[RMDB]
RNA sequence: GGGAACGACUCGAGUAGAGUCGAAAAACGUGUUAAUCGGAAGGAACCGUACGGAAACCAUCCGGAUGGGAAAGCAUGCCCAUCCGAAACGUACGAAGUUGACUUGUCUGGAGCGUAUAUACCCGUACGGAAACCAUCCACGUACGUGGAGGAUGGGCAGACUUACUUGGUUCGCCAAGUAAGUCUGAAAAGAAACAACAACAACAAC
Reactivity to DMS in 0.01 (KOAc 150mM, MgCl2 10mM, bicine 150mM(pH8.5), 24C), signal-to-noise 1, nucleotides 027 to 156: a080c040g040u020g010u010u000a100a110u010c070g000g020a280a090g020g010a070a180c000c000g010u010a030c000g020g020a160a090a110c030c060a300u020c030c010g040g000a020u000g010g000g010a070a020a070g050c200a100u000g000c000c000c000a020u010c000c000g000a040a120a060c010g000u000a020c060g030a050a150g000u000u030g010a080c070u020u030g030u000c000u010g060g000a130g050c080g000u000a100u000a110u000a170c090c040c000g000u020a020c000g000g010a000a050a030c020c010a110u000c030c040a120c010g060u000a060c020g000u010g000g000a300g000g000a050u000g000g050g000
Reactivity to 2A3 in 0.01 (KOAc 150mM, MgCl2 10mM, bicine 150mM(pH8.5), 24C), signal-to-noise 2, nucleotides 027 to 156: a000c100g010u080g030u220u100a110a090u140c100g000g060a030a020g070g030a050a030c010c010g000u010a010c010g010g000a130a130a110c050c010a050u010c000c010g010g000a000u030g030g030g010a060a000a000g150c080a050u120g020c000c000c000a000u000c020c000g010a000a010a000c000g010u000a010c030g030a090a070g070u130u160g060a080c040u030u300g030u050c010u020g030g010a030g050c070g090u060a090u020a020u060a190c010c010c010g000u020a010c010g000g000a020a020a020c000c010a030u030c020c030a050c030g000u020a010c010g010u020g010g030a010g020g000a010u000g040g040g000